[RMDB]
RNA sequence: GGGAACGACUCGAGUAGAGUCGAAAAGAUAUGGAAGGCGAGGAUCAUGAGGACUUUGAUCUCGGAAACGAGGGAGUCUGACAUGGGAGCCUUCCUAAGUCAAAACGAUCUACUUCGGUAGAUCGAAGUUCGAUAAGUGGUUCGCCACUUAUCGAACAAAAGAAACAACAACAACAAC
Reactivity to 2A3 in 0.01 (KOAc 150mM, MgCl2 10mM, bicine 150mM(pH8.5), 24C), signal-to-noise 2, nucleotides 027 to 126: g010a010u060a030u110g000g000a010a000g010g000c010g140a280g120g050a040u010c010a010u020g010a030g020g010a000c000u200u170u180g080a090u080c010u000c010g000g040a100a040a010c000g000a010g040g020g000a000g020u020c040u060g270a300c000a030u020g000g040g000a020g000c010c010u000u000c000c000u010a010a000g000u000c010a000a000a110a140c010g000a000u020c000u010a020c010u060u050c300g120g000u010a000g010a040u010c000g000a040a000
Reactivity to DMS in 0.01 (KOAc 150mM, MgCl2 10mM, bicine 150mM(pH8.5), 24C), signal-to-noise 3, nucleotides 027 to 126: g000a010u010a300u000g010g000a040a010g020g010c030g060a070g030g010a030u010c000a030u010g040a300g000g010a030c000u000u000u020g010a120u010c000u000c000g000g010a020a070a150c000g000a020g000g030g020a000g060u010c000u030g010a120c070a020u020g000g020g010a140g000c000c000u010u000c000c000u020a010a070g020u010c040a050a100a120a180c030g000a000u000c000u010a010c000u000u020c190g040g000u000a010g000a000u000c000g030a020a040
Background
Chemical mapping of a 177-nucleotide RNA with 2A3 and DMS. The reactions ran in a buffer of 150 mM KOAc, 10 mM MgCl2 and 150 mM bicine (pH 8.5), at 24 C. 2A3 adducts were read by reverse transcription with SuperScript II with manganese. For DMS the reverse transcriptase was MarathonRT. Values cover nucleotides 27 to 126. The data come from the RNA Mapping Database (RMDB), library TTRDEL.